The record gives the reactivity of an RNA of 177 nucleotides to 2A3 and DMS. The RNA was probed in 150 mM KOAc, 10 mM MgCl2 and 150 mM bicine (pH 8.5) at 24 C. 2A3 adducts were read by reverse transcription with SuperScript II with manganese. The DMS profile rests on 16,998 reads.

RNA sequence: GGGAACGACUCGAGUAGAGUCGAAAAUAGUCUAGUCGAGGUACUCAUGUCAUGCUAGCAUGGUACGUACGAUCGGAUCGCUAGGGUACAUAGUGUCUAGCCAUGUCGAUCCAGCUAGGUACAGUGCCCUACUAGCUAGGUUCGCCUAGCUAGUAGGAAAAGAAACAACAACAACAAC
Reactivity to 2A3 in 0.01 (KOAc 150mM, MgCl2 10mM, bicine 150mM(pH8.5), 24C), signal-to-noise 8, nucleotides 027 to 126: u110a010g050u000c020u010a010g020u040c020g050a040g040g060u020a010c030u050c300a020u030g100u090c060a100u220g140c090u130a030g000c010a000u020g010g000u020a010c030g040u080a050c030g010a030u050c050g000g020a020u030c030g000c080u050a040g010g000g090u100a040c050a130u230a130g070u070g000u050c010u010a010g010c010c030a120u250g060u170c040g020a010u030c010c000a000g000c000u010a000g010g020u020a020c020a050g060u030g080c000
Reactivity to DMS in 0.01 (KOAc 150mM, MgCl2 10mM, bicine 150mM(pH8.5), 24C), signal-to-noise 9, nucleotides 027 to 126: u010a110g010u000c010u000a070g030u000c020g010a190g010g010u000a000c010u020c020a010u000g010u010c110a110u010g020c270u010a130g000c000a010u000g000g010u000a000c020g020u010a080c070g010a020u000c080g010g000a040u000c160g020c100u000a040g010g010g010u000a030c030a100u000a110g010u000g000u000c010u000a010g010c010c100a100u020g010u000c100g000a090u010c090c070a200g000c010u000a000g000g000u000a010c060a180g010u000g000c050